[RMDB]
RNA sequence: GGGAACGACUCGAGUAGAGUCGAAAAGAUUCUUGGAGGUAGAGCACUGUUUGGGUGAGGGGUCCAUCCCGGAUUACCAAUCUCAGAUAAACUCCGAAUGCCAAUGAAUUAUGGUCGGCAGUCAGACUCCGGAGUGAUUAUUCGUAAUCACUCCGGAAAAAGAAACAACAACAACAAC
Reactivity to DMS in 0.01 (KOAc 150mM, MgCl2 10mM, bicine 150mM(pH8.5), 24C), signal-to-noise 2, nucleotides 027 to 126: g000a060u000u000c010u000u000g010g010a030g000g000u010a070g000a010g010c040a050c130u000g020u000u000u000g020g000g020u000g010a300g000g000g020g010u000c000c010a090u000c120c060c040g010g000a000u000u010a100c020c000a000a230u000c000u000c000a010g000a030u000a030a140a090c030u030c080c020g000a120a080u030g000c000c000a010a040u010g020a020a030u000u000a100u020g030g010u000c080g010g010c070a050g000u000c050a080g010a220c100